[RMDB]
RNA sequence: GGGAACGACUCGAGUAGAGUCGAAAAGCAGUAGUGUUCGCACUACUGCAAAUAAAAAGAGGUGCUACCUACACCCUCUAUAAGCAAAGAUCGAAAGAUCAAAAACAUGCUACUUCGGUAGCAUGAAUCUAGCAAUCAGGUUCGCCUGAUUGCUAGAAAAAGAAACAACAACAACAAC
Reactivity to DMS in 0.01 (KOAc 150mM, MgCl2 10mM, bicine 150mM(pH8.5), 24C), signal-to-noise 1, nucleotides 027 to 126: g040c010a000g000u040a000g040u030g000u000u000c300g020c010a000c000u000a020c020u040g050c000a040a020a030u000a000a030a060a110a010g000a060g000g000u000g000c040u030a280c100c040u000a110c090a160c080c000c000u030c050u020a070u000a040a100g000c200a140a150a100g010a040u000c000g010a080a050a070g000a020u000c010a050a090a100a050a210c010a010u000g000c000u000a000c000u000u000c140g040g000u000a000g040c000a000u000g000a080a030
Reactivity to 2A3 in 0.01 (KOAc 150mM, MgCl2 10mM, bicine 150mM(pH8.5), 24C), signal-to-noise 1, nucleotides 027 to 126: g000c040a000g000u000a000g010u030g040u030u040c230g040c060a000c000u000a000c010u000g000c000a020a000a000u040a010a050a000a010a000g040a010g050g010u080g010c060u090a180c010c010u010a040c040a020c030c070c000u030c010u020a230u120a090a000g040c050a130a030a000g010a000u000c000g030a080a000a050g000a010u000c070a010a070a000a000a070c000a000u010g000c000u000a000c000u000u080c240g130g000u010a000g000c000a000u000g000a000a030
The record gives the reactivity of an RNA of 177 nucleotides to DMS and 2A3. For 2A3 the reverse transcriptase was SuperScript II with manganese. The reactions ran in a buffer of 150 mM KOAc, 10 mM MgCl2 and 150 mM bicine (pH 8.5), at 24 C. The DMS profile rests on 714 reads.